[RMDB]
An RNA of 177 nucleotides, treated with DMS and 2A3 and read out base by base.
RNA sequence: GGGAACGACUCGAGUAGAGUCGAAAAGACGUUAGAAAUCCGUUGGUGGAUGCCAAUGUGAGCGAAAAGUUACUGAGUUGUUUGAAGACUCAAGUGAAUGAGAGGCAUUGAUGGAUUUCAAUGCGAGUCCCCGGAUAUGAUUCGUCAUAUCCGGGGAAAAAGAAACAACAACAACAAC
Reactivity to DMS in 0.01 (KOAc 150mM, MgCl2 10mM, bicine 150mM(pH8.5), 24C), signal-to-noise 2, nucleotides 027 to 126: g030a080c060g000u020u000a150g010a050a020a030u000c000c010g030u010u020g000g020u020g030g020a030u100g030c000c000a070a080u010g020u020g010a080g000c000g000a070a090a080a160g010u000u000a040c030u000g000a070g000u000u000g000u010u030u030g010a200a150g010a020c010u000c000a050a060g030u010g010a030a140u020g010a140g000a160g010g020c010a000u010u000g000a010u000g020g000a050u000u010u000c000a040a020u030g000c010g000a070g010
Reactivity to 2A3 in 0.01 (KOAc 150mM, MgCl2 10mM, bicine 150mM(pH8.5), 24C), signal-to-noise 5, nucleotides 027 to 126: g030a000c010g020u030u050a030g020a020a050a000u010c000c010g030u010u070g090g140u130g180g060a100u150g000c000c000a090a140u190g110u160g120a080g130c030g040a010a060a040a070g070u060u030a030c040u000g000a010g040u000u010g130u090u190u300g210a150a060g020a010c000u000c040a020a020g020u020g060a050a070u090g010a040g030a020g110g080c010a010u050u110g040a030u050g010g070a020u000u010u000c000a010a010u100g000c000g010a020g070
DMS adducts were read by reverse transcription with MarathonRT.